Notes: Structure probing data (DMS and 2A3) for a 177-nucleotide construct. The RNA was probed in 150 mM KOAc, 10 mM MgCl2 and 150 mM bicine (pH 8.5) at 24 C.
RNA sequence: GGGAACGACUCGAGUAGAGUCGAAAAUGCUAUUGAUUAUAAAGACACUAACGUUUCGACAAAGGUAGUUAAAAUUAUUCAAAGCUAUAAAGAUAUUAUCAAUCGAAAUACUUGGAGGAAAUGACGAGUCAUUUCAUAAGUUCGCUUAUGAAAUGACAAAAGAAACAACAACAACAAC
Reactivity to DMS in 0.01 (KOAc 150mM, MgCl2 10mM, bicine 150mM(pH8.5), 24C), signal-to-noise 4, nucleotides 027 to 126: u020g000c000u000a090u000u000g000a070u020u030a050u020a050a090a250g000a100c050a040c020u010a040a170c160g000u000u000u010c080g000a060c070a090a260a170g010g000u000a030g020u000u000a030a090a100a050u040u020a090u010u000c010a020a020a040g000c000u010a090u020a070a030a110g010a140u000a020u020u020a070u010c080a060a050u000c040g000a050a030a030u030a030c050u010u000g000g000a040g000g010a040a050a100u030g000a080c130g000a150
Reactivity to 2A3 in 0.01 (KOAc 150mM, MgCl2 10mM, bicine 150mM(pH8.5), 24C), signal-to-noise 7, nucleotides 027 to 126: u140g010c030u070a170u250u030g030a040u100u170a080u140a100a170a030g040a010c010a000c060u070a110a010c060g060u000u060u120c120g050a030c070a050a090a010g070g030u040a050g020u090u030a060a160a090a100u090u060a050u040u070c030a000a010a080g000c010u020a000u110a170a090a030g040a070u070a050u090u150a100u120c070a100a020u070c020g050a090a050a000u110a040c040u040u050g060g030a050g030g070a080a080a110u150g040a030c040g000a000

About this RNA: For 2A3 the reverse transcriptase was SuperScript II with manganese. DMS adducts were read by reverse transcription with MarathonRT.